[RMDB]
RNA sequence: GGGAACGACUCGAGUAGAGUCGAAAACACAUGCCAUCAUAUCGGUUAAGAACUCUUAACUCUGAUGGCUUUCGAGUUAUGUGGUGCAUUGAAGCUCUCCCUUCAAUUCAACGUACCGAUCCGUCAAGGGGUCUAUUGAUUUCGAUCAAUAGACCCCAAAAGAAACAACAACAACAAC
Reactivity to DMS in 0.01 (KOAc 150mM, MgCl2 10mM, bicine 150mM(pH8.5), 24C), signal-to-noise 1, nucleotides 027 to 126: c200a040c110a120u010g000c000c000a010u010c000a070u000a120u000c290g010g020u000u000a000a030g000a240a150c300u030c000u000u000a000a020c000u000c080u030g000a000u000g000g000c030u000u000u000c040g000a030g020u000u010a080u000g010u000g010g020u000g000c040a040u000u030g030a090a060g020c070u010c020u000c060c120c020u000u010c040a040a060u030u000c100a020a000c010g030u000a020c000c010g010a130u000c090c050g010u000c040a040a110
Background: The record gives the reactivity of an RNA of 177 nucleotides to DMS. The reactions ran in a buffer of 150 mM KOAc, 10 mM MgCl2 and 150 mM bicine (pH 8.5), at 24 C. Source: RMDB library M2PK90, as collected in RNAgym. Reactivities are given for positions 27 through 126. For DMS, 619 sequencing reads were counted.